[RMDB]
RNA sequence: GGGAACGACUCGAGUAGAGUCGAAAAAUGGGAGCUGAUGAGAGAAUAGUGCAGUCAGUGAUUGAGGCUAUUGCUCGUGCUAUAGGGAGAUACUUUGAUUCUGAUACUCUAUGCAAUCCCUCAAAUACGUUUAGAAUUCAUUCGUGAAUUCUAAACGAAAAGAAACAACAACAACAAC
Reactivity to 2A3 in 0.01 (KOAc 150mM, MgCl2 10mM, bicine 150mM(pH8.5), 24C), signal-to-noise 7, nucleotides 027 to 126: a000u090g010g010g010a040g030c100u080g040a090u150g040a100g010a010g040a120a080u080a070g070u060g080c050a010g020u000c020a030g100u040g210a050u020u040g010a020g100g000c040u030a010u050u060g050c010u010c040g050u080g020c040u130a040u070a100g020g030g000a060g010a040u060a090c040u140u130u110g060a100u140u020c010u020g000a010u030a100c010u010c010u020a010u050g000c000a010a140u010c010c020c000u020c000a060a100a030u140a060
Reactivity to DMS in 0.01 (KOAc 150mM, MgCl2 10mM, bicine 150mM(pH8.5), 24C), signal-to-noise 9, nucleotides 027 to 126: a090u010g010g000g010a070g010c120u000g000a110u010g010a110g000a090g010a080a040u000a040g020u010g010c040a070g010u000c020a120g010u010g000a040u000u000g010a060g010g010c140u000a020u000u010g010c000u000c030g020u000g010c120u010a080u010a080g010g000g000a070g010a090u000a060c120u010u000u010g010a090u000u010c050u000g010a130u010a090c030u000c010u000a030u000g000c060a090a130u000c080c010c010u000c130a060a040a110u010a110
An RNA of 177 nucleotides, treated with 2A3 and DMS and read out base by base. As a SHAPE reagent, 2A3 marks flexible, mostly unpaired nucleotides at the ribose 2'-OH. The RNA was probed in 150 mM KOAc, 10 mM MgCl2 and 150 mM bicine (pH 8.5) at 24 C.